[RMDB]
RNA sequence: GGGAACGACUCGAGUAGAGUCGAAAAGAAAAGACCAGAUCUAAAGAAAGGACUUCAGUUGUCCGAACUGAAAAAGAAGGUCGAUAGAUCUAAAGCGCGAUUGGAGCGCGAUCCAAUCAAAAAGAAAGGGAUACUAUAUCUUCGGAUAUAGUAUCCCAAAAGAAACAACAACAACAAC
Reactivity to 2A3 in 0.01 (KOAc 150mM, MgCl2 10mM, bicine 150mM(pH8.5), 24C), signal-to-noise 2, nucleotides 027 to 126: g140a020a090a000a000g010a020c030c000a010g020a040u040c000u030a020a040a080g000a050a150a080g120g010a020c030u040u040c040a110g040u060u050g160u140c070c090g000a010a000c000u010g060a080a080a030a080a000g110a030a010g100g000u010c000g000a020u030a000g020a000u000c050u120a040a100a050g130c070g030c070g070a020u010u160g040g000a080g060c130g000c010g070a000u000c000c010a000a000u020c000a080a060a030a070a000g190a090a060a000
Reactivity to DMS in 0.01 (KOAc 150mM, MgCl2 10mM, bicine 150mM(pH8.5), 24C), signal-to-noise 4, nucleotides 027 to 126: g030a070a160a130a130g000a100c060c020a080g000a040u020c000u000a020a150a300g030a040a080a120g000g020a080c100u010u020c050a050g010u010u020g000u010c080c080g000a050a060c030u010g010a010a060a060a120a110g030a190a080g000g000u000c000g020a300u040a020g000a040u000c040u010a040a180a110g000c090g020c170g000a030u000u000g000g000a030g000c070g030c240g020a010u000c020c000a010a010u010c020a070a080a070a100a110g010a050a130a060
This 177-nucleotide RNA was probed chemically with 2A3 and DMS. Conditions: 150 mM KOAc, 10 mM MgCl2 and 150 mM bicine (pH 8.5), 24 C. Source: RMDB library OK1LIB, as collected in RNAgym. 2A3 adducts were read by reverse transcription with SuperScript II with manganese.